[RMDB]
RNA sequence: GGGAACGACUCGAGUAGAGUCGAAAAUGGAUGAAAACACGCAUUUAUUGACCCAAAACACACGGAGCUGCUCGAGAUGGGCCAGGGCGAGGUGCGGUUGGGGAGGCUGUAGGUCUGGGAACGGACACGCGGGGACACGAUUCCGGUUUGGGGUCCGAUCUAGGAAAGAGUUCGCUCUUUCCUAGAUAAAAGAAACAACAACAACAAC
Reactivity to DMS in 0.01 (KOAc 150mM, MgCl2 10mM, bicine 150mM(pH8.5), 24C), signal-to-noise 1, nucleotides 027 to 156: u000g010g000a170u010g010a090a120a100a170c050a030c000g040c030a030u000u000u010a170u070u000g000a210c000c040c010a000a090a070a090c130a140c070a160c040g000g010a220g000c040u000g020c020u010c030g010a180g000a190u000g050g020g150c060c080a130g030g010g030c080g010a030g050g000u000g020c020g010g010u000u010g000g000g000g000a100g010g060c100u010g000u020a060g000g010u010c020u020g000g000g000a000a130c040g050g020a050c000a050c060g020c020g020g070g000g020a090c050a030c080g020a200u000u000c020c010g030g000u030u010u000g000g000g010g040u010c020c010g010
Reactivity to 2A3 in 0.01 (KOAc 150mM, MgCl2 10mM, bicine 150mM(pH8.5), 24C), signal-to-noise 2, nucleotides 027 to 156: u040g060g050a040u070g040a050a090a090a020c100a040c100g140c020a070u040u110u070a140u160u250g070a130c000c000c000a080a050a050a020c150a000c010a000c070g020g010a020g090c040u010g000c010u030c010g060a050g040a080u080g000g040g000c000c040a040g020g010g000c070g020a050g000g030u080g000c120g020g050u170u190g090g000g000g020a020g070g000c050u060g080u160a070g060g050u010c050u020g010g000g030a060a080c030g030g010a010c020a020c070g010c030g010g000g010g010a010c020a010c160g090a110u130u060c060c020g040g020u060u090u040g070g010g010g010u030c040c020g010

Conditions: 150 mM KOAc, 10 mM MgCl2 and 150 mM bicine (pH 8.5), 24 C. An RNA of 207 nucleotides, treated with DMS and 2A3 and read out base by base. For DMS the reverse transcriptase was MarathonRT. 2A3 adducts were read by reverse transcription with SuperScript II with manganese. It was measured as part of the RMDB library OK3TST.